[RMDB]
RNA sequence: GGGAACGACUCGAGUAGAGUCGAAAAGUGCGGCUUUGGGGCUACAGGAGGUUGCCAUCAUUUCGCUCUAUGUUGUCCCAUACCUCCUGAGGCUUGCUUGGCGCAAGAGGAGCCAGGGACCUAUGUGGGUAAUGUCUUGGUUCGCCAAGACAUUACCAAAAGAAACAACAACAACAAC
Reactivity to DMS in 0.01 (KOAc 150mM, MgCl2 10mM, bicine 150mM(pH8.5), 24C), signal-to-noise 2, nucleotides 027 to 126: g010u000g000c040g010g000c050u010u020u010g000g000g010g040c010u000a110c020a030g000g010a020g010g030u010u050g010c140c020a010u010c090a070u030u000u010c010g010c040u000c040u000a070u010g020u000u010g000u010c010c020c000a110u050a050c060c010u000c000c000u010g000a300g000g000c060u000u000g000c010u000u000g020g030c070g050c110a070a090g000a060g000g010a160g000c010c000a110g000g000g000a010c040c050u000a100u050g000u030g000
Reactivity to 2A3 in 0.01 (KOAc 150mM, MgCl2 10mM, bicine 150mM(pH8.5), 24C), signal-to-noise 5, nucleotides 027 to 126: g120u070g000c010g010g020c040u030u060u140g010g010g030g010c000u040a030c010a010g020g030a020g020g030u090u090g100c060c000a060u100c050a060u090u110u110c060g040c040u010c020u090a100u110g060u070u060g050u110c000c000c020a020u090a040c000c010u040c000c000u030g040a100g040g060c040u040u090g050c010u060u060g100g010c040g000c100a040a030g030a050g110g040a020g000c020c020a030g010g000g000a030c000c020u150a160u170g120u150g040
Source information: Chemical mapping of a 177-nucleotide RNA with DMS and 2A3. Values are in units of 0.01, from 0 to 300, in steps of 10. The reactions ran in a buffer of 150 mM KOAc, 10 mM MgCl2 and 150 mM bicine (pH 8.5), at 24 C.